An RNA of 177 nucleotides, treated with 2A3 and DMS and read out base by base.
RNA sequence: GGGAACGACUCGAGUAGAGUCGAAAACACACAAGCCCCUAAACCAUAUGAAGCUAGUGAUGGUGAGUCAUGGCGUGAAGUGAUUAAUCGUGCCGUUAAGCUUAAAGUGGACAAAGCAAAAGCCAUGAUUACAACUCCUUUUCGAAGGAGUUGUAAUAAAAGAAACAACAACAACAAC
Reactivity to 2A3 in 0.01 (KOAc 150mM, MgCl2 10mM, bicine 150mM(pH8.5), 24C), signal-to-noise 2, nucleotides 027 to 126: c060a000c010a000c040a100a040g100c000c000c000c010u060a100a100a050c020c020a020u050a020u230g070a090a010g030c020u050a000g070u020g140a060u020g010g060u060g050a020g020u010c020a030u050g020g010c010g000u030g050a050a000g020u040g070a050u060u090a040a030u070c050g010u090g010c000c000g080u050u080a060a010g000c000u020u060a050a090a010g070u090g040g010a030c030a020a100a020g060c000a000a000a040a090g000c010c010a030u110g000
Reactivity to DMS in 0.01 (KOAc 150mM, MgCl2 10mM, bicine 150mM(pH8.5), 24C), signal-to-noise 6, nucleotides 027 to 126: c110a090c120a080c130a120a120g010c040c010c020c050u000a080a080a110c040c040a040u010a060u010g020a110a090g000c040u010a070g020u010g010a040u000g010g020u000g000a140g010u010c050a030u020g010g010c040g000u000g020a070a060g010u000g020a110u000u010a100a110u000c060g010u000g010c020c040g020u010u000a060a080g010c050u000u000a050a080a130g020u000g000g010a060c090a070a070a090g010c100a040a040a090a120g010c020c050a050u000g010
The 2A3 profile rests on 3,076 reads. Source: RMDB library OK2TRN, as collected in RNAgym. For 2A3 the reverse transcriptase was SuperScript II with manganese. 2A3 is a SHAPE reagent: it acylates the 2'-hydroxyl of flexible nucleotides of all four kinds. Conditions: 150 mM KOAc, 10 mM MgCl2 and 150 mM bicine (pH 8.5), 24 C.